An RNA of 177 nucleotides, treated with DMS and read out base by base. The reactions ran in a buffer of 150 mM KOAc, 10 mM MgCl2 and 150 mM bicine (pH 8.5), at 24 C. For DMS the reverse transcriptase was MarathonRT.

RNA sequence: GGGAACGACUCGAGUAGAGUCGAAAACACGGAUGAAAAUUACACAACCGUGGCCCUUUGUGUAAUUUUCAUAGGGCAGCCUUAGGUACGGUGGACAUGCGAAAGCAUGUCCAUCGUACUUAAGGCAGCAGCAUCAAGGGUUCGCCCUUGAUGCUGCAAAAGAAACAACAACAACAAC
Reactivity to DMS in 0.01 (KOAc 150mM, MgCl2 10mM, bicine 150mM(pH8.5), 24C), signal-to-noise 1, nucleotides 027 to 126: c080a150c110g000g010a030u000g000a020a000a010a000u000u010a000c000a000c000a020a030c250c120g020u000g020g020c050c030c010u000u000u000g010u000g010u000a000a000u010u000u000u000c000a030u010a100g000g000g040c120a090g020c000c000u000u000a000g000g000u020a000c000g030g010u000g000g010a000c000a010u000g000c000g000a090a090a250g000c000a010u010g000u000c000c000a000u000c000g010u000a000c000u000u000a010a000g000g010c000a010